[RMDB]
Structure probing data (2A3 and DMS) for a 177-nucleotide construct.

RNA sequence: GGGAACGACUCGAGUAGAGUCGAAAACGAGAAGCCCAAAUUUAAAACUCCCCAUCGUCCGGCGACCUGAUUACCAGAUUACCAAAUCCGCAGCUGUGCGUGGCUAGUUUCGAGUGCCGGUGUUCCAACCAUCAUCCAUCUUCGGAUGGAUGAUGGUAAAAGAAACAACAACAACAAC
Reactivity to 2A3 in 0.01 (KOAc 150mM, MgCl2 10mM, bicine 150mM(pH8.5), 24C), signal-to-noise 3, nucleotides 027 to 126: c060g030a010g100a140a010g070c000c000c000a080a080a040u200u180u090a090a050a040a030c040u010c000c010c000c000a060u030c050g060u010c010c020g030g010c010g020a050c000c030u040g030a060u020u020a020c010c010a010g030a060u070u100a050c000c030a080a020a170u050c010c030g010c010a030g000c040u080g030u050g040c000g040u030g030g000c010u010a030g100u000u060u050c010g030a020g000u060g010c060c000g000g020u040g050u030u020c010c010a010
Reactivity to DMS in 0.01 (KOAc 150mM, MgCl2 10mM, bicine 150mM(pH8.5), 24C), signal-to-noise 2, nucleotides 027 to 126: c190g030a120g010a140a230g010c010c020c030a050a060a240u000u000u020a100a070a020a140c130u030c010c000c000c030a050u030c090g000u000c000c060g000g010c110g000a120c040c010u020g000a020u010u030a070c110c060a000g010a070u030u000a110c040c050a000a030a070u040c010c000g010c020a060g010c000u000g020u030g030c000g030u000g000g010c030u000a030g030u000u000u000c010g000a060g000u010g000c000c030g040g000u000g020u000u000c040c030a140

For 2A3 the reverse transcriptase was SuperScript II with manganese.